This 177-nucleotide RNA was probed chemically with DMS. DMS adducts were read by reverse transcription with MarathonRT.
RNA sequence: GGGAACGACUCGAGUAGAGUCGAAAAGGAAGCGCACCUCGAAGAAGUCGACGAUGGCCUGCCAGAAUGCCUCGCGCCGCUGCACGCUCCAGGCAUGCAGCGCCGGGUAGUCGACCAGGCCGAGGGACCCAGUACUCGCUUUCGAGCGAGUACUGGGAAAAGAAACAACAACAACAAC
Reactivity to DMS in 0.01 (KOAc 150mM, MgCl2 10mM, bicine 150mM(pH8.5), 24C), signal-to-noise 1, nucleotides 027 to 126: g010g020a020a040g020c050g000c100a120c040c030u000c030g000a120a170g000a050a080g030u000c000g030a110c060g020a210u000g080g000c000c040u000g020c030c080a300g000a030a040u000g000c000c000u000c020g000c080g030c090c090g010c000u010g000c050a030c030g020c020u000c220c300a160g010g010c030a050u000g000c010a010g020c000g020c020c000g000g020g020u010a030g010u000c000g010a090c300c030a000g000g010c020c000g000a050g000g000g010a260
The reactions ran in a buffer of 150 mM KOAc, 10 mM MgCl2 and 150 mM bicine (pH 8.5), at 24 C.